[RMDB]
This 207-nucleotide RNA was probed chemically with 2A3 and DMS.
RNA sequence: GGGAACGACUCGAGUAGAGUCGAAAAGAGAUGGCGAGAGCCAUCGGUAGUAUAGCGAAAAUCAUAAAUGAGAAGAGCUCUAAACGCCUAAGUAGAGUUAAAAUAAUUAGACACGCACUACUACAAACACGGCCUCGAACGUUCGCGUUCGAGGCAACAUGGUAAAGACGUUCGCGUCUUUACCAUGAAAAGAAACAACAACAACAAC
Reactivity to 2A3 in 0.01 (KOAc 150mM, MgCl2 10mM, bicine 150mM(pH8.5), 24C), signal-to-noise 4, nucleotides 027 to 156: g100a000g000a000u010g010g000c000g010a040g010a010g070c000c000a000u000c000g000g000u000a000g000u000a020u070a050g010c020g040a100a040a060a020u070c060a050u090a200a160a160u240g050a070g020a090a030g010a010g020c000u000c010u030a090a130a050c100g040c010c020u050a080a030g040u010a010g020a000g030u060u060a040a080a060a070u180a020a090u160u100a030g040a050c030a000c060g000c010a010c020u020a000c000u010a010c020a010a160a000c080a030c140g130g000c000c000u000c000g000a000a000c000g020u060u060c200g010c000g100u000u000c000g000a000g000g000c000a000a000
Reactivity to DMS in 0.01 (KOAc 150mM, MgCl2 10mM, bicine 150mM(pH8.5), 24C), signal-to-noise 1, nucleotides 027 to 156: g000a180g000a010u000g000g000c020g050a300g000a300g000c000c000a010u000c020g000g020u000a020g020u000a090u000a190g020c000g010a120a050a110a150u010c030a120u010a120a080a100u020g080a100g000a150a160g000a240g040c030u010c020u010a110a090a070c040g000c020c070u000a030a060g000u000a070g010a070g030u000u000a020a040a130a110u010a040a100u000u000a090g000a140c000a120c090g000c010a090c100u000a040c050u000a060c010a110a020a070c120a090c050g020g020c000c000u000c000g000a020a000c010g040u030u000c230g000c000g010u000u000c000g020a030g040g000c000a000a010

For DMS, 1,615 sequencing reads were counted. Source: RMDB library M2RFPK, as collected in RNAgym. DMS adducts were read by reverse transcription with MarathonRT. The RNA was probed in 150 mM KOAc, 10 mM MgCl2 and 150 mM bicine (pH 8.5) at 24 C.